The data come from the RNA Mapping Database (RMDB), library OK3TST. Structure probing data (DMS and 2A3) for a 207-nucleotide construct. The 2A3 profile rests on 595 reads.
[RMDB]
RNA sequence: GGGAACGACUCGAGUAGAGUCGAAAAGUGCUCCUGCUGGUUCAGGACUGUGUUAUUUGCAGACAGUUGGAAGUCUCAGACGUCCCAGGGAAGUUUCUGGCAAUCUGCCCCCUUCCAGUUGCUUUGAGAAAACGAGAGCAGAUUCAGUGAUAGGAACCGGACAAGAAUAAUUCGUUAUUCUUGUCCGAAAAGAAACAACAACAACAAC
Reactivity to DMS in 0.01 (KOAc 150mM, MgCl2 10mM, bicine 150mM(pH8.5), 24C), signal-to-noise 1, nucleotides 027 to 156: g050u010g000c050u000c040c060u010g030c020u010g010g030u000u000c050a060g000g020a160c080u000g000u000g010u010u000a090u010u000u000g100c050a030g020a070c030a080g030u020u000g010g010a060a130g020u010c020u000c070a100g010a120c060g050u010c020c000c050a150g000g020g050a080a180g020u010u010u000c030u010g090g000c030a120a070u000c020u000g040c010c000c000c030c020u000u010c010c030a140g000u010u000g010c020u010u020u010g020a170g020a030a060a060a080c070g010a050g010a070g050c010a050g000a100u020u000c030a120g010u000g010a120u020a090g020g030a080a110c060
Reactivity to 2A3 in 0.01 (KOAc 150mM, MgCl2 10mM, bicine 150mM(pH8.5), 24C), signal-to-noise 2, nucleotides 027 to 156: g020u010g070c010u010c000c020u000g000c040u070g100g020u030u110c070a120g000g090a110c000u060g010u000g060u100u200a250u120u230u240g000c040a000g020a060c030a020g020u040u010g040g030a070a040g060u020c010u000c060a040g000a160c020g020u030c020c060c000a010g020g010g010a100a050g010u060u130u080c030u020g000g000c030a070a110u060c050u130g020c040c010c010c010c040u040u000c030c000a020g020u050u060g120c040u180u190u150g060a120g000a040a070a020a000c060g020a050g000a030g180c010a010g010a000u050u000c020a030g010u020g070a010u070a050g080g000a040a080c170